This 207-nucleotide RNA was probed chemically with 2A3.
RNA sequence: GGGAACGACUCGAGUAGAGUCGAAAACAACCCAACUCCUACUCAAUACGUCCUCGUCGUACAGAACGGUAACAUGUUUUCCGAACAUCCGCGCUUGGGUAUACGAGUAUACACCUUACCCAACCCUCCAACCACCUAAAGUUCGCUUUAGGUGGAAGUAUCAAUUGCCCUUCGGGGCAAUUGAUACAAAAGAAACAACAACAACAAC
Reactivity to 2A3 in 0.01 (KOAc 150mM, MgCl2 10mM, bicine 150mM(pH8.5), 24C), signal-to-noise 1, nucleotides 027 to 156: c030a050a080c000c010c000a030a040c050u100c020c000u060a080c010u040c070a060a080u050a080c190g040u050c000c020u070c000g040u000c000g010u050a060c040a070g060a220a020c010g010g020u030a050a040c090a130u160g040u010u080u050u060c010c000g000a050a010c000a070u040c080c030g070c030g020c120u040u060g020g000g020u030a020u010a020c060g010a000g110u040a060u040a080c040a040c030c010u040u020a000c010c010c000a000a060c010c000c000u020c010c000a040a050c000c000a000c000c000u010a000a000a010g030u030u050c080g040c100u010u000u000a000g040g000u000g010g000a000a000
Conditions: 150 mM KOAc, 10 mM MgCl2 and 150 mM bicine (pH 8.5), 24 C. Source: RMDB library M2RFPK, as collected in RNAgym. Reactivities are given for positions 27 through 156.